Source: RMDB library OK1LIB, as collected in RNAgym. Structure probing data (2A3 and DMS) for a 177-nucleotide construct. The 2A3 profile rests on 3,253 reads.
[RMDB]
RNA sequence: GGGAACGACUCGAGUAGAGUCGAAAACGGUACGCGUACGCGCGUACCGAAUAAGCAAGUAGAAAUGGCCAAACUACAUGCAUCGAAAGAAAGGCCAUAAAAAGAGCAGGCUUACGAGCCUGCUCAAGUACUACUCCGGUUUCGACCGGAGUAGUACAAAAGAAACAACAACAACAAC
Reactivity to 2A3 in 0.01 (KOAc 150mM, MgCl2 10mM, bicine 150mM(pH8.5), 24C), signal-to-noise 4, nucleotides 027 to 126: c010g000g000u000a000c030g020c020g040u040a030c300g000c000g010c000g150u010a000c000c000g000a010a000u060a030a010g010c010a000a120g000u000a000g020a040a060a060u040g010g000c000c000a040a060a030c030u010a040c030a090u070g010c020a140u150c240g150a200a130a060g100a060a080a050g030g000c010c010a010u140a010a040a010a000a000g000a000g030c000a000g000g000c010u050u100a050c220g090a010g000c000c000u000g000c000u000c010a000a000
Reactivity to DMS in 0.01 (KOAc 150mM, MgCl2 10mM, bicine 150mM(pH8.5), 24C), signal-to-noise 1, nucleotides 027 to 126: c040g140g000u000a000c000g000c000g000u050a100c140g000c000g130c000g000u000a040c000c000g000a050a000u000a150a040g000c050a050a080g030u010a010g080a000a010a000u010g000g000c030c000a260a160a090c000u030a000c020a010u000g000c020a100u000c110g030a110a050a150g000a160a000a070g000g070c000c000a050u050a000a100a160a170a100g000a000g040c000a000g000g010c000u000u000a020c230g000a000g090c000c000u000g010c000u000c000a000a010

Source information:
For DMS, 1,821 sequencing reads were counted.